[RMDB]
RNA sequence: GGGAACGACUCGAGUAGAGUCGAAAAAGCUCUGAACCGAAGCGGCGGGAUGAUUCAAAUCAUCGGUAGGGGAGCGUCCCAGCGGGGGCGAAGCGGGAGGGGAACCGACCGUGGACCUUCUGGGAGCUGUAAUGGCCUUAUUCGUAAGGCCAUUACAAAAAGAAACAACAACAACAAC
Reactivity to DMS in 0.01 (KOAc 150mM, MgCl2 10mM, bicine 150mM(pH8.5), 24C), signal-to-noise 4, nucleotides 027 to 126: a110g010c030u000c020u000g000a200a060c050c030g000a120a160g000c080g010g000c030g000g010g010a040u010g000a050u010u040c300a090a150a120u000c030a040u010c010g000g000u020a110g000g010g000g000a080g000c040g000u010c010c000c000a070g010c140g010g000g000g000g020c120g000a080a130g000c030g000g020g000a300g000g010g000g020a060a090c000c000g000a140c010c040g000u000g000g010a070c130c040u000u000c000u000g000g000g000a120g010c100
Reactivity to 2A3 in 0.01 (KOAc 150mM, MgCl2 10mM, bicine 150mM(pH8.5), 24C), signal-to-noise 5, nucleotides 027 to 126: a000g020c020u020c010u030g040a060a060c020c050g040a060a010g030c040g060g020c060g020g080g000a010u040g000a010u090u210c130a140a120a110u040c020a010u010c020g020g010u060a050g030g030g010g000a040g040c010g080u030c000c000c000a020g010c080g020g010g000g020g140c060g020a010a000g010c010g000g010g020a050g030g010g000g010a010a030c010c000g030a030c000c010g010u040g000g030a020c000c000u030u020c010u020g020g010g010a020g010c010
An RNA of 177 nucleotides, treated with DMS and 2A3 and read out base by base. It was measured as part of the RMDB libraries RFM100 and RFMREP. Values cover nucleotides 27 to 126. The reactions ran in a buffer of 150 mM KOAc, 10 mM MgCl2 and 150 mM bicine (pH 8.5), at 24 C.